The record gives the reactivity of an RNA of 207 nucleotides to 2A3 and DMS. It was measured as part of the RMDB library RNAMAK.
[RMDB]
RNA sequence: GGGAACGACUCGAGUAGAGUCGAAAACUGUCGUUCGCGACAGAGAAAGGGGUCGGUCUCGACGAUCUUGUCAGUGUAGGCUGAAGCCUCCACGGCCUAAGCACUUGGAUUUAGGGAGAGACCGACGGAGGCACCCAAACUGAGUUUUCGAACUCAAACUUUUACAGAGAUUCGUCUCUGUAAAAGUAAAAGAAACAACAACAACAAC
Reactivity to 2A3 in 0.01 (KOAc 150mM, MgCl2 10mM, bicine 150mM(pH8.5), 24C), signal-to-noise 8, nucleotides 027 to 156: c010u010g000u000c000g030u060u090c270g010c020g120a000c010a000g030a010g050a050a120a010g150g010g040g010u000c010g000g010u000c000u030c010g060a080c050g070a160u170c110u300u300g150u200c030a010g000u000g040u050a000g010g000c010u010g000a040a020g000c000c010u010c000c000a020c000g000g000c000c000u090a150a050g100c000a020c030u110u190g150g040a190u220u220u300a180g010g010g020a050g000a000g000a010c000c000g000a000c000g000g000a000g000g000c000a020c010c010c000a040a070a050c110u070g010a020g020u030u030u100u160c150g150a010a000c000u000c000a050a050
Reactivity to DMS in 0.01 (KOAc 150mM, MgCl2 10mM, bicine 150mM(pH8.5), 24C), signal-to-noise 2, nucleotides 027 to 156: c010u010g020u000c010g010u000u010c200g040c020g040a010c010a000g020a120g000a090a120a130g010g000g020g030u010c020g030g010u000c000u000c010g000a220c150g000a060u010c050u000u000g020u000c030a090g030u010g010u000a050g020g000c030u000g010a040a130g000c010c000u000c010c020a300c070g020g030c000c010u000a050a090g020c000a080c050u000u010g050g040a200u000u010u000a140g000g020g010a300g000a070g000a050c000c010g000a030c030g000g000a020g020g020c010a050c010c010c010a080a130a090c110u010g010a110g010u010u000u000u010c060g000a090a100c030u000c010a040a180